[RMDB]
RNA sequence: GGGAACGACUCGAGUAGAGUCGAAAAAGUACACGCAGUAUAGUGCCACUUGUGUGAGAAUACUUUUAGUACAAGCGAGUACACGCUGUAUACUGCCACUUGUGUGAGAAUACUUUUAGUACAAGCGUGCAAAUAGGGCUUUCGAGCCCUAUUUGCAAAAAGAAACAACAACAACAAC
Reactivity to DMS in 0.01 (KOAc 150mM, MgCl2 10mM, bicine 150mM(pH8.5), 24C), signal-to-noise 1, nucleotides 027 to 126: a010g000u000a000c120a070c110g000c190a080g010u000a050u000a060g050u010g010c110c020a070c030u010u000g000u020g000u000g010a140g000a100a210u000a060c030u000u000u000u000a160g020u040a030c050a090a210g000c030g020a050g030u000a100c040a110c000g000c120u000g000u000a060u000a010c040u000g070c120c040a030c020u020u040g000u020g000u050g000a140g000a070a110u020a010c040u000u000u000u000a050g000u050a080c050a130a040g000c010g040
Reactivity to 2A3 in 0.01 (KOAc 150mM, MgCl2 10mM, bicine 150mM(pH8.5), 24C), signal-to-noise 2, nucleotides 027 to 126: a000g030u030a040c070a000c070g000c040a000g000u030a050u110a030g130u020g040c010c060a000c000u000u050g000u000g000u010g040a060g100a060a010u070a090c050u060u100u110u130a000g150u110a040c050a050a040g000c050g010a030g010u020a000c090a000c040g020c000u000g000u000a050u000a060c000u040g150c070c000a010c000u080u130g070u080g000u000g120a070g090a130a130u150a040c020u000u050u060u120a050g000u000a090c040a150a060g020c040g010